[RMDB]
Notes: Structure probing data (2A3 and DMS) for a 177-nucleotide construct. It was measured as part of the RMDB libraries RFM100 and RFMREP.
RNA sequence: GGGAACGACUCGAGUAGAGUCGAAAAGCCCAAGGGUCUCUCCUGGCUCUGCUUCCCCAUCACUGCCUCCACUUCCCCGCAUCCCUUUCCCUGGCAGAGGCUUCUUGCCACAGGGCUCUGGGCACUCAUAGUACAAAAGAUUCGUCUUUUGUACUAUAAAAGAAACAACAACAACAAC
Reactivity to 2A3 in 0.01 (KOAc 150mM, MgCl2 10mM, bicine 150mM(pH8.5), 24C), signal-to-noise 9, nucleotides 027 to 126: g030c010c000c020a030a070g070g010g010u030c020u000c000u010c060c030u020g030g000c010u010c020u040g040c020u050u050c000c000c010c000a040u060c020a010c040u060g020c000c000u030c020c010a050c030u040u040c000c000c000c010g020c020a090u070c010c000c000u010u040u020c010c000c000u010g030g000c040a030g020a040g130g010c000u090u040c030u070u160g020c000c000a030c020a030g010g020g000c010u010c010u020g010g010g000c020a020c020u080c010
Reactivity to DMS in 0.01 (KOAc 150mM, MgCl2 10mM, bicine 150mM(pH8.5), 24C), signal-to-noise 9, nucleotides 027 to 126: g010c010c010c010a110a090g010g010g010u010c010u000c050u010c050c050u010g000g000c030u000c030u000g000c060u010u000c020c010c010c060a080u010c080a080c070u010g000c030c010u000c030c040a090c070u000u000c020c010c010c060g000c110a090u010c010c010c020u000u010u000c010c000c010u000g000g000c060a060g000a110g010g020c060u010u010c070u000u010g010c030c020a090c120a070g010g010g010c060u000c030u000g000g010g010c090a090c090u010c090